[RMDB]
RNA sequence: GGGAACGACUCGAGUAGAGUCGAAAAGGUAAUAGCCGGUCAUGACGGCGGGACCGGUGCCUCACCACUGACCUCCAUCAAACACGCCGGCCUGCCCUGGGAACUGGGUAUUGCCGAAACCCACCAGUCGAAAAGAGGUGUUCGCACCUCUUUUCGAAAAAGAAACAACAACAACAAC
Reactivity to DMS in 0.01 (KOAc 150mM, MgCl2 10mM, bicine 150mM(pH8.5), 24C), signal-to-noise 1, nucleotides 027 to 126: g000g000u010a100a010u000a000g000c010c000g030g020u030c010a060u020g020a090c300g000g020c000g000g020g000a100c020c000g000g030u000g000c110c000u000c180a080c080c020a110c210u010g000a120c010c030u010c050c080a030u030c090a050a120a130c130a100c160g000c010c000g010g010c030c010u000g000c070c000c060u000g010g000g000a140a020c030u000g030g020g000u000a010u000u000g000c010c040g010a010a140a070c000c010c000a120c070c080a100g000